[RMDB]
RNA sequence: GGGAACGACUCGAGUAGAGUCGAAAAAUUCAACAUGCUUUUCUAUAAUCAUUUUAGCUAUUUCGGCAUCAUCCAAUAGUACAUUUUCCAGAUUAGCAGAAUAGAUAUUAAUGUCGUAUUUGAACAGAGCCUGUAACAUCUCAAUGUCUUUAUUAUCCUUUUCCAUACUCUUCGGAGUAUGGAAAAGAAAAGAAACAACAACAACAAC
Reactivity to DMS in 0.01 (KOAc 150mM, MgCl2 10mM, bicine 150mM(pH8.5), 24C), signal-to-noise 1, nucleotides 027 to 156: a150u010u010c000a090a110c060a090u000g000c030u000u000u000u000c000u020a160u010a020a080u040c010a040u010u000u000u010a100g010c030u000a040u000u010u000c080g040g020c120a080u000c100a080u020c040c040a100a080u000a100g010u010a120c110a120u000u010u010u000c040c030a150g000a100u000u020a080g010c010a150g000a040a030u010a040g020a040u010a040u000u000a070a100u000g010u000c040g040u010a060u000u000u010g000a080a120c150a090g000a130g020c020c000u000g040u000a070a100c050a060u020c030u000c050a040a120u000g030u000c000u010u000u000a050u030u010a170u010c040
Reactivity to 2A3 in 0.01 (KOAc 150mM, MgCl2 10mM, bicine 150mM(pH8.5), 24C), signal-to-noise 3, nucleotides 027 to 156: a000u090u060c040a040a020c030a070u070g020c020u090u080u070u030c030u130a180u090a130a070u140c070a130u040u040u080u130a020g020c020u040a040u060u110u160c080g050g000c060a090u060c000a020u080c070c000a020a040u020a040g070u060a060c040a130u070u110u070u060c040c020a010g010a030u000u060a050g000c010a020g020a040a070u090a050g030a060u100a050u120u190a130a030u060g020u030c050g020u030a080u040u100u110g020a010a020c020a030g030a000g060c000c030u050g010u040a060a020c010a060u030c030u020c070a040a050u010g040u000c050u050u120u030a150u070u080a100u120c010